[RMDB]
RNA sequence: GGGAACGACUCGAGUAGAGUCGAAAAUACGCUAUAAUCAUCCUCACUUUGUUUUCCUCCACUUUUGCGUUAGCAACAACAAAGGAAAACCAUCCGUGUGUCGUACUUACAGGAGCUUCAGGACAACUCGGGUAGUUCUUUUCGAAGAACUACCCGAAAAAGAAACAACAACAACAAC
Reactivity to DMS in 0.01 (KOAc 150mM, MgCl2 10mM, bicine 150mM(pH8.5), 24C), signal-to-noise 1, nucleotides 027 to 126: u010a070c120g020c070u070a070u000a070a050u000c040a040u000c020c050u000c040a060c100u000u010u000g010u000u000u000u000c030c010u000c050c060a180c180u000u000u000u000g000c040g000u010u010a150g000c010a060a050c280a040a040c090a160a150a050g030g020a020a020a090a040c030c090a040u010c000c100g000u000g010u000g010u020c030g010u000a040c060u010u040a080c120a010g000g000a040g010c060u000u000c050a060g000g010a010c070a090a120c160
This 177-nucleotide RNA was probed chemically with DMS.
Source: RMDB library OK2TST, as collected in RNAgym.